This 207-nucleotide RNA was probed chemically with 2A3. The reactions ran in a buffer of 150 mM KOAc, 10 mM MgCl2 and 150 mM bicine (pH 8.5), at 24 C. The 2A3 profile rests on 451 reads. Reactivities are given for positions 27 through 156. Source: RMDB library OK3TST, as collected in RNAgym.
RNA sequence: GGGAACGACUCGAGUAGAGUCGAAAACACUGUUUAUGAUGCCAAUACCGGUCAGCCAAUUAUUCAGGGACAAGGUGACCCAACAUCAGAUAUUCAGAAUUAUGAAUACGCUAGAAACAAUGGUUUCCAAGGGUCUUUUGCAGAUUACCAGCAGCAGCUCUCUGGGUACAUUCGUGUACCCAGAGAGAAAAGAAACAACAACAACAAC
Reactivity to 2A3 in 0.01 (KOAc 150mM, MgCl2 10mM, bicine 150mM(pH8.5), 24C), signal-to-noise 2, nucleotides 027 to 156: c090a010c020u060g000u050u120u040a120u140g030a110u090g040c040c010a070a000u090a120c100c060g020g030u060c000a020g030c010c020a060a040u120u010a070u150u090c060a050g010g000g160a090c050a080a020g120g000u010g050a020c020c080c020a050a010c000a120u130c020a000g070a090u020a050u030u030c000a000g180a190a300u250u020a090u300g010a010a000u030a080c200g010c090u160a070g060a110a040a000c020a070a270u080g070g010u030u070u050c050c060a110a130g000g020g050u010c050u000u090u010u060g030c000a020g010a040u090u100a000c040c010a010g020c020a000g080c000a020g000